An RNA of 207 nucleotides, treated with 2A3 and DMS and read out base by base. The 2A3 profile rests on 937 reads. Conditions: 150 mM KOAc, 10 mM MgCl2 and 150 mM bicine (pH 8.5), 24 C. 2A3 adducts were read by reverse transcription with SuperScript II with manganese. DMS (dimethyl sulfate) methylates the pairing face of unpaired adenines and cytosines. Source: RMDB library OK3TST, as collected in RNAgym. Values cover nucleotides 27 to 156. For DMS the reverse transcriptase was MarathonRT.
[RMDB]
RNA sequence: GGGAACGACUCGAGUAGAGUCGAAAAGCGUUGGAGGCCUCACCAUCACCACGAGGGUUUCCGGAUCGUGGAGAUUUGGCGCCAGCAAGGACGAGGUUGAUGAACUGAUGGUUGUGCUCGUCGAGAAGAAGUCGGACACGGAGUUGAGUACCGUCGCCUUGCUUUAGAUCUUCGGAUCUAAAGCAAGAAAAGAAACAACAACAACAAC
Reactivity to 2A3 in 0.01 (KOAc 150mM, MgCl2 10mM, bicine 150mM(pH8.5), 24C), signal-to-noise 2, nucleotides 027 to 156: g040c030g040u050u010g030g040a040g040g040c010c030u070c090a090c040c030a090u040c010a030c040c000a010c000g000a010g020g090g010u030u090u060c030c000g070g040a100u090c020g000u020g040g030a060g000a050u100u080u210g010g000c010g010c000c000a010g040c030a030a040g070g010a010c030g020a030g070g020u100u070g070a060u040g010a050a090c070u050g030a060u140g100g070u060u020g030u030g050c010u020c030g060u030c030g060a010g010a080a040g040a020a030g050u060c040g020g040a060c070a020c080g070g000a040g010u060u050g030a010g030u070a060c010c040g010u040c010g080c010
Reactivity to DMS in 0.01 (KOAc 150mM, MgCl2 10mM, bicine 150mM(pH8.5), 24C), signal-to-noise 1, nucleotides 027 to 156: g030c080g030u000u010g060g020a110g070g040c040c000u010c040a110c070c030a100u010c070a280c010c020a090c000g000a120g020g010g020u000u000u000c040c010g050g020a130u000c010g020u000g010g000a120g000a100u030u000u020g010g030c100g070c000c060a060g050c060a080a100g030g020a110c040g000a060g000g010u000u000g010a080u000g000a070a090c040u000g000a060u000g020g010u000u010g000u000g000c020u000c040g000u000c030g020a190g030a110a090g010a120a130g000u020c000g000g020a040c030a110c030g010g010a080g060u010u000g000a190g020u040a050c000c000g020u000c040g040c090